[RMDB]
Chemical mapping of a 177-nucleotide RNA with DMS and 2A3. The RNA was probed in 150 mM KOAc, 10 mM MgCl2 and 150 mM bicine (pH 8.5) at 24 C. It was measured as part of the RMDB libraries RFM100 and RFMREP. The 2A3 profile rests on 4,577 reads. Reactivities are rounded to 0.1 and cut off at 0 and 3.

RNA sequence: GGGAACGACUCGAGUAGAGUCGAAAACUCGUGAAGGAACGCCGCGGGACCGCUCCUUUGCCCGAAGCCUUUCCGGAGCUUGCUGCCAAAGGAACCGCAUCGCCGCCAAUCUCGCACUUGCACAAACUGCAUUGAUACCAUUCGUGGUAUCAAUGCAAAAAGAAACAACAACAACAAC
Reactivity to DMS in 0.01 (KOAc 150mM, MgCl2 10mM, bicine 150mM(pH8.5), 24C), signal-to-noise 3, nucleotides 027 to 126: c020u000c020g020u020g010a080a030g010g020a020a070c070g010c030c080g030c050g020g000g020a100c080c010g000c010u000c030c040u000u030u020g020c050c000c060g030a080a070g000c020c040u000u010u010c040c040g010g030a160g020c020u010u010g020c060u000g020c090c030a040a080a080g000g020a050a090c060c050g000c040a060u000c090g010c020c000g020c050c000a030a060u000c020u000c060g030c030a060c040u000u000g000c070a050c140a080a070a120c130
Reactivity to 2A3 in 0.01 (KOAc 150mM, MgCl2 10mM, bicine 150mM(pH8.5), 24C), signal-to-noise 4, nucleotides 027 to 126: c020u010c030g050u080g070a070a030g030g020a080a010c030g010c040c000g010c040g010g020g040a040c000c030g010c010u040c000c000u020u030u060g040c000c000c020g040a040a020g000c010c000u070u140u040c040c020g010g000a020g040c010u020u070g020c020u040g010c010c000a010a090a040g050g000a040a020c020c010g010c030a020u040c020g000c010c000g020c020c010a020a080u020c010u010c030g010c010a050c040u040u050g010c040a040c020a050a130a030c080